Record summary
Source: RMDB library TTRINS, as collected in RNAgym. This 177-nucleotide RNA was probed chemically with DMS and 2A3. High DMS reactivity at an A or C suggests that its Watson-Crick edge is free.
[RMDB]
RNA sequence: GGGAACGACUCGAGUAGAGUCGAAAAGAUAUGGAGGACCGAACUACAGCGAAAGUGGGACGAAGAACCUUUUCCUCGGAAACGAGGAAAAGGGGAGUCCCAUGAGUAGCUGCGGUCCUCCUAAGUCCUUGAUAUAUGGCUUCGGCCAUAUAUCAAGAAAAGAAACAACAACAACAAC
Reactivity to DMS in 0.01 (KOAc 150mM, MgCl2 10mM, bicine 150mM(pH8.5), 24C), signal-to-noise 3, nucleotides 027 to 126: g010a090u000a150u000g010g020a030g020g000a010c010c010g010a070a060c170u020a300c020a020g010c000g000a130a240a300g000u000g010g000g030a030c000g010a080a200g000a130a210c010c000u000u000u000u000c000c010u010c000g000g010a050a050a120c000g010a010g000g000a000a000a010a000g000g000g020g000a040g000u000c000c000c000a000u000g000a030g000u000a100g010c000u000g030c000g020g000u000c000c000u000c000c000u000a000a080g000u000c030
Reactivity to 2A3 in 0.01 (KOAc 150mM, MgCl2 10mM, bicine 150mM(pH8.5), 24C), signal-to-noise 1, nucleotides 027 to 126: g030a020u080a030u190g000g000a000g000g010a020c010c010g040a140a110c250u300a140c300a030g010c020g020a100a020a000g030u020g060g000g020a010c020g180a300a130g050a020a020c000c000u020u000u010u000c000c010u000c010g030g020a070a080a000c000g030a010g000g040a000a020a010a020g000g020g000g020a010g000u000c000c080c010a000u010g000a020g000u000a000g060c010u000g010c000g010g000u000c010c000u010c010c000u000a000a000g010u000c000
For 2A3 the reverse transcriptase was SuperScript II with manganese.
For 2A3, 3,065 sequencing reads were counted.